Structure probing data (DMS and 2A3) for a 177-nucleotide construct. Reactivities are given for positions 27 through 126. The data come from the RNA Mapping Database (RMDB), library OK2TRN. Conditions: 150 mM KOAc, 10 mM MgCl2 and 150 mM bicine (pH 8.5), 24 C.

RNA sequence: GGGAACGACUCGAGUAGAGUCGAAAAAUUGUGGGUGAGUCAACGCGAGGACUUGACGGCAGACGCUAAACGGGUCAAUCUGUUGGGCAGCAUGCGCCGCAUGUGGCCAAAGGAAGUCGAGAUCGCCAUUCCUUCCGAUUUUCGAAUCGGAAGGAAUAAAAGAAACAACAACAACAAC
Reactivity to DMS in 0.01 (KOAc 150mM, MgCl2 10mM, bicine 150mM(pH8.5), 24C), signal-to-noise 4, nucleotides 027 to 126: a090u000u020g020u000g010g000g030u010g000a060g010u000c060a070a060c140g000c090g020a070g010g000a070c070u000u010g010a080c090g000g020c050a040g020a070c130g000c040u000a030a050a110c070g010g000g000u000c130a120a170u010c030u000g020u010u010g010g000g010c020a120g020c020a030u010g000c010g000c220c140g000c010a020u010g000u000g010g000c000c000a050a090a110g000g000a040a080g000u000c020g010a090g020a080u000c040g000c050c100
Reactivity to 2A3 in 0.01 (KOAc 150mM, MgCl2 10mM, bicine 150mM(pH8.5), 24C), signal-to-noise 1, nucleotides 027 to 126: a000u110u100g010u040g020g020g000u040g010a030g080u050c030a050a080c060g000c040g080a060g050g000a050c000u020u040g050a020c000g040g000c030a010g000a050c040g060c070u100a040a000a100c040g060g000g010u040c040a020a070u040c010u040g070u080u050g050g020g040c030a030g000c010a030u030g000c130g180c070c120g030c010a020u050g050u040g020g000c000c000a030a060a050g050g010a070a000g030u030c010g000a000g000a080u050c000g000c020c000